Chemical mapping of a 177-nucleotide RNA with 2A3 and DMS.
The 2A3 profile rests on 490 reads.
2A3 is a SHAPE reagent: it acylates the 2'-hydroxyl of flexible nucleotides of all four kinds.
Source: RMDB library OK1LIB, as collected in RNAgym.

RNA sequence: GGGAACGACUCGAGUAGAGUCGAAAAGUCUGAAACAGACGGUUGGACGGAUAGCAGGAACCAUCCGUUUUCAAGAGAAACCAAGUUUCUGGGGUGGGAAGCUAGGUGAGAGCGAAAAGCUCCACCACAGAAGGCCCUGUUUCGACAGGGCCUUCUGAAAAGAAACAACAACAACAAC
Reactivity to 2A3 in 0.01 (KOAc 150mM, MgCl2 10mM, bicine 150mM(pH8.5), 24C), signal-to-noise 1, nucleotides 027 to 126: g010u000c000u000g080a300a000a000c000a110g110a020c030g030g050u010u040g040g030a050c000g000g010a080u030a020g040c120a100g070g280a130a030c000c090a000u000c000c000g010u000u000u050u030c210a180a040g070a030g020a200a000a000c000c000a000a100g000u000u000u000c000u000g000g000g000g000u060g000g010g100a080a000g020c000u000a020g020g000u000g010a170g000a040g010c050g060a100a090a000a200g050c000u020c000c000a000c000c000a000
Reactivity to DMS in 0.01 (KOAc 150mM, MgCl2 10mM, bicine 150mM(pH8.5), 24C), signal-to-noise 1, nucleotides 027 to 126: g060u010c000u060g050a100a170a160c050a030g000a000c110g020g000u000u000g020g020a110c100g070g050a080u000a010g000c080a090g000g000a000a260c000c000a010u000c000c000g050u010u040u020u000c120a080a030g000a030g030a040a010a100c010c140a200a090g000u000u000u000c000u000g040g020g000g000u000g000g000g000a110a050g000c050u070a050g000g000u000g010a230g020a000g000c020g000a050a020a220a190g000c000u000c000c040a000c000c000a130